An RNA of 177 nucleotides, treated with DMS and 2A3 and read out base by base.
For DMS the reverse transcriptase was MarathonRT.
It was measured as part of the RMDB libraries RFM100 and RFMREP.
The RNA was probed in 150 mM KOAc, 10 mM MgCl2 and 150 mM bicine (pH 8.5) at 24 C.
RNA sequence: GGGAACGACUCGAGUAGAGUCGAAAAGGAUCCGGGAGGCGGAAGAAACAAAAAACAACCUGAUGCAGGUAGCCAGUGAGCAUAUUGCGCCGCUUCAGGAUGCUGCAGAUCUGGAAAUUGCAACGGAACAUAAUCAGACUUUCGAGUCUGAUUAUGUAAAAGAAACAACAACAACAAC
Reactivity to DMS in 0.01 (KOAc 150mM, MgCl2 10mM, bicine 150mM(pH8.5), 24C), signal-to-noise 9, nucleotides 027 to 126: g000g010a080u020c020c020g010g010g010a060g000g010c060g010g010a090a060g020a090a100a090c130a010a050a060a080a080a110c140a080a090c040c010u000g000a090u000g000c020a050g020g010u010a080g020c040c040a070g020u010g010a190g010c050a110u030a100u030u020g000c060g000c010c010g000c050u000u010c060a120g010g010a050u010g010c040u010g020c080a050g000a080u010c030u000g000g000a060a060a080u020u010g010c050a050a110c060g000g000a140
Reactivity to 2A3 in 0.01 (KOAc 150mM, MgCl2 10mM, bicine 150mM(pH8.5), 24C), signal-to-noise 9, nucleotides 027 to 126: g030g010a030u010c020c000g040g120g010a050g020g030c040g030g030a070a030g090a080a160a030c170a050a110a030a000a010a030c070a030a040c020c010u040g030a070u120g030c060a070g040g010u050a060g040c030c010a050g050u090g120a070g040c050a030u080a120u180u190g010c030g000c010c000g000c000u010u000c000a000g020g020a030u050g030c010u020g000c010a010g010a180u030c010u070g050g000a060a110a090u130u070g010c030a050a040c060g030g030a030